[RMDB]
RNA sequence: GGGAACGACUCGAGUAGAGUCGAAAACUCAGGCAGCAGGUGGAGCUGUACCGCCUUCUCAGCAGGAACACUUACCUGGAGUGGGAGGACAGUGUCCUGGGGCGGCACAUCUUCUGGAGACGACUCAGUUUUCAACGUGAUUCGUCACGUUGAAAACAAAAGAAACAACAACAACAAC
Reactivity to DMS in 0.01 (KOAc 150mM, MgCl2 10mM, bicine 150mM(pH8.5), 24C), signal-to-noise 2, nucleotides 027 to 126: c020u000c050a150g010g010c010a050g030c050a080g040g030u000g010g020a120g020c080u000g020u000a020c080c010g030c000c020u010u010c110u010c140a150g000c000a040g000g000a090a050c060a030c080u010u000a130c020c020u010g020g000a070g020u000g010g020g020a050g000g020a090c160a050g000u000g010u000c010c020u000g010g000g010g020c060g000g020c060a050c010a050u010c030u000u000c020u010g000g020a080g010a090c060g020a070c080u010c070a080
Reactivity to 2A3 in 0.01 (KOAc 150mM, MgCl2 10mM, bicine 150mM(pH8.5), 24C), signal-to-noise 2, nucleotides 027 to 126: c020u020c020a000g000g070c070a060g010c020a040g040g080u040g030g010a030g000c000u000g050u040a150c020c000g000c010c010u120u090c070u020c020a170g080c020a000g050g040a110a060c090a010c110u080u130a100c030c010u050g020g080a110g050u110g030g040g030a000g000g000a020c020a040g050u040g080u060c000c020u000g010g000g000g050c010g000g020c010a000c000a070u020c020u100u050c050u070g100g050a050g040a050c040g050a060c030u020c110a030